RNA sequence: GGGAACGACUCGAGUAGAGUCGAAAAUCUGAGACUGGAAUCUUGCUGCUUGAUCAAUUGACAUUCUUUUCCUUUAUAUUGGGUCAGCGGGGGGAGAACAAGAAACAAAUAGAGGAUUGCAUUCACAUAGGAAAAGCAAGCCAACAUGAAGAUUGAACUAUAAUGACGAUUUCGAUCGUCAUUAUAGAAAAGAAACAACAACAACAAC
Reactivity to DMS in 0.01 (KOAc 150mM, MgCl2 10mM, bicine 150mM(pH8.5), 24C), signal-to-noise 2, nucleotides 027 to 156: u000c050u000g040a170g040a170c070u010g020g020a140a120u000c050u000u010g010c040u010g000c090u000u000g020a160u020c000a030a230u000u000g020a140c110a110u000u010c010u000u000u000u010c000c010u000u000u000a100u000a160u050u020g020g050g010u030c060a150g030c050g010g050g000g010g030g020a140g000a040a100c080a050a100g030a110a090a100c040a050a050a090u010a070g000a140g040g000a060u000u020g010c030a210u010u000c060a080c090a140u000a110g000g020a030a030a040a080g020c120a030a120g020c030c000a020a100c050a120u000g000a080a100g000a120u010u000g000a070a220
Reactivity to 2A3 in 0.01 (KOAc 150mM, MgCl2 10mM, bicine 150mM(pH8.5), 24C), signal-to-noise 5, nucleotides 027 to 156: u040c050u050g030a020g030a080c070u060g030g050a080a050u040c030u030u080g010c020u030g000c010u060u110g050a070u100c050a070a160u130u110g030a070c050a110u070u090c020u030u070u040u030c000c000u040u140u070a160u040a080u090u150g050g000g010u020c020a020g030c120g000g010g020g010g000g010a060g030a020a040c030a040a040g060a040a110a020c080a040a080a030u070a030g030a020g040g010a030u010u110g010c010a010u040u070c030a030c050a120u150a030g070g000a060a040a010a030g020c020a030a000g020c010c030a040a040c040a080u090g020a030a040g030a050u040u140g010a030a010